[RMDB]
RNA sequence: GGGAACGACUCGAGUAGAGUCGAAAAAUGGAGAGACAUGAAAGGUCGUAAAUCAGCCAUGAAAAGAAUUCAGGAAAUGGUGACCAAAGUGAAUGAUAUGGGGCUAGAAACGUGUGUUACUUUAGGAGCACUAGGCAUUAUUCGUAAUGCCUAGUGCAAAAGAAACAACAACAACAAC
Reactivity to 2A3 in 0.01 (KOAc 150mM, MgCl2 10mM, bicine 150mM(pH8.5), 24C), signal-to-noise 1, nucleotides 027 to 126: a000u070g000g000a030g000a000g030a010c050a010u080g090a110a070a060g060g010u040c000g020u070a050a070a130u090c030a030g120c000c000a150u110g070a000a020a010a070g130a050a060u030u140c000a010g000g060a020a020a090u010g030g040u030g020a040c080c030a030a040a020g060u050g020a060a080u030g020a010u000a030u170g020g000g030g000c020u030a070g060a040a130a020c050g020u080g000u040g040u120u000a020c000u090u010u110a060g020g050a100
Reactivity to DMS in 0.01 (KOAc 150mM, MgCl2 10mM, bicine 150mM(pH8.5), 24C), signal-to-noise 2, nucleotides 027 to 126: a010u010g000g000a080g030a150g020a070c040a040u000g010a080a170a130g000g040u000c010g010u000a090a180a110u000c090a080g040c030c040a070u000g000a100a020a100a150g010a060a130u010u000c070a070g000g000a080a090a040u000g000g000u000g020a070c050c050a060a070a150g010u000g000a070a050u000g000a050u020a050u000g010g000g000g000c050u010a080g000a030a010a100c130g030u010g020u000g000u000u000a050c050u010u000u000a050g000g010a170
Conditions: 150 mM KOAc, 10 mM MgCl2 and 150 mM bicine (pH 8.5), 24 C. The record gives the reactivity of an RNA of 177 nucleotides to 2A3 and DMS. Reactivities are rounded to 0.1 and cut off at 0 and 3. Reactivities are given for positions 27 through 126. It was measured as part of the RMDB library OK2TST.